[RMDB]
RNA sequence: GGGAACGACUCGAGUAGAGUCGAAAAAGGUCAGAAAGUGUCCUUCACCAUCGAAAGCGGCGCUAAAGGCCCGGCAGCUGGUAACGUAACCAGCCUGUAAUCUCUGCUUAAAAGCACAGAAUCUAAGCUCGAAGGAGAUUUUCGAAUCUCCUUCGAGAAAAGAAACAACAACAACAAC
Reactivity to 2A3 in 0.01 (KOAc 150mM, MgCl2 10mM, bicine 150mM(pH8.5), 24C), signal-to-noise 2, nucleotides 027 to 126: a050g000g000u000c050a000g190a110a300a000g090u040g000u030c000c000u000u020c030a070c090c100a160u130c010g110a000a000a000g020c030g030g000c030g000c050u090a020a070a070g060g000c000c000c000g040g050c000a000g030c000u040g010g000u100a230a040c150g030u080a040a050c000c000a000g050c060c000u060g010u010a040a050u010c010u010c010u070g010c000u100u150a100a090a050a000g030c020a010c000a030g090a030a020u060c050u040a060a050g060
Reactivity to DMS in 0.01 (KOAc 150mM, MgCl2 10mM, bicine 150mM(pH8.5), 24C), signal-to-noise 2, nucleotides 027 to 126: a150g020g020u010c000a010g000a170a020a070g000u000g000u000c020c010u050u010c020a120c200c150a270u000c090g000a020a000a090g020c140g000g020c000g000c060u000a000a260a010g010g000c000c000c150g000g020c070a050g000c000u020g000g000u000a080a070c300g000u000a070a060c000c000a000g000c050c000u030g140u010a090a160u010c000u000c060u020g020c020u020u000a020a050a070a090g000c000a060c250a100g000a010a090u020c060u000a020a200g000